Structure probing data (DMS and 2A3) for a 207-nucleotide construct. Reactivities are given for positions 27 through 156. Reactivities are rounded to 0.1 and cut off at 0 and 3. 2A3 adducts were read by reverse transcription with SuperScript II with manganese. The RNA was probed in 150 mM KOAc, 10 mM MgCl2 and 150 mM bicine (pH 8.5) at 24 C. DMS adducts were read by reverse transcription with MarathonRT. It was measured as part of the RMDB library OK3TST.
RNA sequence: GGGAACGACUCGAGUAGAGUCGAAAAUGGGGAGGAGCUUACUACAUUAUCUACAGUGCUUUUUACUGGAAUGAAUGUGGGUGAUCAUGUGUGUGUAUGUUCUUCCACAAUACUGUUUAACAACAUCAUGUUCUGUGUAUAAAUUAGUGUGUGGAGACCUAAUGCACGGUUUCGACCGUGCAUUAGGAAAAGAAACAACAACAACAAC
Reactivity to DMS in 0.01 (KOAc 150mM, MgCl2 10mM, bicine 150mM(pH8.5), 24C), signal-to-noise 2, nucleotides 027 to 156: u000g000g010g040g020a110g010g030a080g010c060u010u010a120c070u000a170c010a030u000u000a070u010c040u000a130c010a050g050u020g000c290u000u020u000u010u000a040c030u020g010g010a070a090u000g000a050a080u010g050u010g030g020g040u020g020a100u000c090a140u010g030u020g030u000g000u000g040u000a100u020g020u010u000c060u000u000c000c020a030c000a050a130u000a020c010u000g000u000u000u000a020a070c070a090a040c010a030u000c100a180u000g020u000u000c030u020g000u020g000u000a240u000a000a030a050u000u000a040g000u000g020u030g050u050g000g000a040g000a110
Reactivity to 2A3 in 0.01 (KOAc 150mM, MgCl2 10mM, bicine 150mM(pH8.5), 24C), signal-to-noise 6, nucleotides 027 to 156: u120g020g020g000g000a070g030g030a050g030c040u120u100a040c020u040a010c020a050u070u060a050u090c010u020a030c010a020g010u020g090c090u120u140u090u190u200a040c030u030g030g060a090a040u080g030a050a020u030g030u040g010g030g030u070g040a030u080c090a090u070g040u020g010u010g000u010g010u070a120u060g020u010u010c010u070u010c000c000a010c000a020a000u060a030c010u010g070u010u020u040a040a030c090a020a040c010a050u170c070a090u160g100u280u130c090u080g040u020g010u020a050u060a220a030a020u120u230a050g000u000g000u000g000u000g020g000a030g030a030